RNA sequence: GGGAACGACUCGAGUAGAGUCGAAAAGAGCCGUUGGAUCACGUCGACCUUGCCUUCGGGCAGCAUAUCGGCGACAGCGGAGUCGAUGCCGACCUGCGCCGCCACCGCGUCGGCGGCGGCCCGAUUGUGGUCAAGCACGUUUCGACGUGCUUGACCAAAAAGAAACAACAACAACAAC
Reactivity to DMS in 0.01 (KOAc 150mM, MgCl2 10mM, bicine 150mM(pH8.5), 24C), signal-to-noise 1, nucleotides 027 to 126: g000a070g000c010c160g000u000u000g000g030a170u000c000a040c180g050u000c030g000a080c300c040u000u050g000c040c000u000u110c260g040g000g120c000a170g000c120a060u050a260u000c010g020g000c000g000a000c090a120g000c000g000g010a070g000u000c000g000a200u010g000c100c010g000a000c270c220u040g110c040g000c110c050g010c000c040a010c000c080g010c080g000u090c030g000g010c070g000g050c090g030g000c070c050c000g000a060u000u070g000
Reactivity to 2A3 in 0.01 (KOAc 150mM, MgCl2 10mM, bicine 150mM(pH8.5), 24C), signal-to-noise 2, nucleotides 027 to 126: g050a060g000c040c000g000u050u070g020g090a130u120c020a110c160g000u000c050g000a050c000c000u050u170g030c060c000u030u040c120g000g000g040c000a000g000c080a050u090a060u080c030g010g050c120g080a080c010a000g060c000g050g030a050g040u020c000g040a070u030g100c060c000g060a130c010c000u070g030c030g000c030c000g000c000c000a060c020c050g030c070g170u130c000g000g000c030g000g000c010g010g050c010c000c000g120a110u000u250g030
Source: RMDB library OK1LIB, as collected in RNAgym. Chemical mapping of a 177-nucleotide RNA with DMS and 2A3. Conditions: 150 mM KOAc, 10 mM MgCl2 and 150 mM bicine (pH 8.5), 24 C. The 2A3 profile rests on 740 reads.